Source: RMDB library TTRDES, as collected in RNAgym. Structure probing data (2A3 and DMS) for a 177-nucleotide construct. Reactivities are rounded to 0.1 and cut off at 0 and 3.

RNA sequence: GGGAACGACUCGAGUAGAGUCGAAAAGAUAUGGAGAUUAAGGGAGCUAGCGGUCGGAAACGACCGGCUAGCAUCGAUCUUAAUGUCUCCUAAGUCAAACUCGAUCAAACUUCGGUUUGAUCGAGAAGAGACGUAUACACUUCGGUGUAUACGUCUCAAAAGAAACAACAACAACAAC
Reactivity to 2A3 in 0.01 (KOAc 150mM, MgCl2 10mM, bicine 150mM(pH8.5), 24C), signal-to-noise 1, nucleotides 027 to 126: g000a000u030a000u020g000g000a000g020a010u000u020a010a000g020g010g010a010g000c010u000a010g020c000g020g000u000c000g000g000a010a000a000c000g000a000c010c000g100g050c010u000a000g000c000a000u100c010g000a000u000c000u020u020a070a060u160g260u060c020u000c020c000u000a010a000g010u000c000a000a070a170c000u020c000g010a000u000c000a010a000a030c010u090u120c300g150g010u030u000u010g000a000u000c000g010a000g000a000a020
Reactivity to DMS in 0.01 (KOAc 150mM, MgCl2 10mM, bicine 150mM(pH8.5), 24C), signal-to-noise 2, nucleotides 027 to 126: g000a040u000a010u010g000g000a010g000a100u000u000a000a020g000g000g010a010g030c000u000a000g000c000g000g000u000c010g030g000a020a010a040c010g000a000c000c000g030g020c000u010a000g020c000a100u000c270g000a040u000c010u000u000a000a050u010g020u020c000u000c000c000u000a010a150g000u000c010a160a210a290c000u000c000g010a000u000c010a000a010a010c000u010u010c260g020g040u010u000u000g010a000u010c000g000a000g000a100a110